[RMDB]
RNA sequence: GGGAACGACUCGAGUAGAGUCGAAAAUCGCGCGAACUGGUGCCGCGCGCGCGCGAGGCGUCGGUGGUCGGCGAGCCCACGGACGCAAAAACUCGCGCGUAAAUAAAUAGCAUUAGAAAAAGAAAAACGUAUAUAUAGCGUUCGCGCUAUAUAUACGAAAAGAAACAACAACAACAAC
Reactivity to DMS in 0.01 (KOAc 150mM, MgCl2 10mM, bicine 150mM(pH8.5), 24C), signal-to-noise 2, nucleotides 027 to 126: u070c050g040c010g020c000g000a130a110c000u000g010g020u000g010c000c010g000c010g000c000g010c140g010c000g000c010g050a000g010g030c000g020u010c000g030g080u000g010g030u010c000g030g050c180g000a300g000c140c000c000a000c000g000g010a020c000g000c030a080a070a090a080a300c000u000c000g000c000g000c000g040u000a050a010a040u010a000a000a000u000a030g030c000a010u010u010a030g000a040a090a050a120a020g010a080a060a050a100a180
Reactivity to 2A3 in 0.01 (KOAc 150mM, MgCl2 10mM, bicine 150mM(pH8.5), 24C), signal-to-noise 5, nucleotides 027 to 126: u130c010g010c000g000c000g030a280a280c050u010g000g010u000g000c000c000g000c000g000c000g000c000g000c000g000c000g000a010g020g000c000g000u000c070g190g000u000g000g000u020c030g030g160c190g040a020g010c000c000c000a000c000g090g000a000c000g000c000a060a060a020a050a090c000u000c000g000c000g000c000g000u010a000a000a010u300a000a000a000u010a010g000c000a010u010u010a010g000a040a050a010a010a000g220a030a060a020a010a000
Structure probing data (DMS and 2A3) for a 177-nucleotide construct. Reactivities are given for positions 27 through 126. Conditions: 150 mM KOAc, 10 mM MgCl2 and 150 mM bicine (pH 8.5), 24 C. For 2A3, 10,138 sequencing reads were counted. For DMS the reverse transcriptase was MarathonRT.